[RMDB]
RNA sequence: GGGAACGACUCGAGUAGAGUCGAAAAGAUAUGGAGAUGGGACAUGUAUGGACUCGGAAACGAGUUUAAUACAACAGCCCAUUCUCCUAAGUCAAAAUCUCCUGUGUCGUUCGCGACACAGGAGAAACCGUAUAUAUACGUUCGCGUAUAUAUACGGAAAAGAAACAACAACAACAAC
Reactivity to DMS in 0.01 (KOAc 150mM, MgCl2 10mM, bicine 150mM(pH8.5), 24C), signal-to-noise 4, nucleotides 027 to 126: g000a030u000a170u000g000g000a010g000a030u000g000g020g010a040c070a120u000g030u000a020u000g000g000a000c000u010c000g010g000a030a040a080c000g000a010g000u000u000u000a050a030u000a000c010a080a060c230a150g000c000c000c000a010u010u010c000u000c000c000u000a010a090g000u010c010a100a060a100a160u000c000u000c000c000u000g010u000g010u000c000g020u000u010c240g010c000g010a020c000a010c000a000g000g010a000g000a000a030a060
Reactivity to 2A3 in 0.01 (KOAc 150mM, MgCl2 10mM, bicine 150mM(pH8.5), 24C), signal-to-noise 4, nucleotides 027 to 126: g010a010u020a010u080g000g000a000g010a000u000g000g000g030a070c090a170u220g000u010a010u010g000g010a000c000u000c010g010g010a020a020a010c010g010a000g010u000u010u030a120a040u030a010c160a170a030c030a120g010c030c010c000a010u160u010c000u000c000c000u000a020a000g010u010c010a030a030a050a300u000c000u000c000c000u000g000u010g000u000c020g000u040u110c300g020c000g170a000c000a000c000a010g030g000a000g000a000a000a010